Source: RMDB library M2RFPK, as collected in RNAgym.
Structure probing data (2A3 and DMS) for a 207-nucleotide construct.
For 2A3, 1,539 sequencing reads were counted.
The reactions ran in a buffer of 150 mM KOAc, 10 mM MgCl2 and 150 mM bicine (pH 8.5), at 24 C.
For DMS the reverse transcriptase was MarathonRT.
RNA sequence: GGGAACGACUCGAGUAGAGUCGAAAAUAGCUGCAACAUUAUUUGAGUAUCCUGAAAACGGGCUUUUCAGAAUGGUGUUGCCGUAUAAAAUUGUAGGAGUGCAUAGUGGCCCGUAUAGCAGGAAUUAGAGAGCUACAGAUGUUCGCAUCUGUAGCAACCUAUAAAAUGGGUUCGCCCAUUUUAUAGGAAAAGAAACAACAACAACAAC
Reactivity to 2A3 in 0.01 (KOAc 150mM, MgCl2 10mM, bicine 150mM(pH8.5), 24C), signal-to-noise 2, nucleotides 027 to 156: u100a010g040c010u030g040c000a030a020c000a020u030u060a060u060u140u060g040a040g010u080a120u050c000c000u040g020a080a010a000a020c030g040g000g010c020u040u080u170u150c100a120g040a110a070u050g020g000u010g000u030u030g010c010c000g010u030a060u080a080a140a060a050u140u130g060u050a080g010g050a040g030u060g060c030a020u040a060g080u070g080g010c050c000c000g010u000a020u060a070g040c020a010g000g010a000a000u020u050a040g050a010g000a000g040c000u000a000c000a000g000a000u000g000u020u040c120g000c090a000u000c000u000g000u000a000g000c000a000a000
Reactivity to DMS in 0.01 (KOAc 150mM, MgCl2 10mM, bicine 150mM(pH8.5), 24C), signal-to-noise 2, nucleotides 027 to 156: u000a050g010c050u000g020c030a050a040c020a030u010u000a000u000u000u000g020a150g020u010a070u010c020c000u020g010a000a010a080a080c050g000g040g040c040u010u000u010u000c040a110g010a100a060u000g010g000u000g020u000u000g010c000c050g050u000a090u000a040a100a060a150u000u000g020u000a090g000g020a200g040u000g010c040a120u000a100g020u010g040g010c000c000c010g020u000a070u000a160g000c020a070g010g020a080a120u010u000a140g000a230g010a110g000c010u000a020c000a000g000a050u010g000u010u000c290g000c000a020u000c000u000g020u000a010g060c010a010a020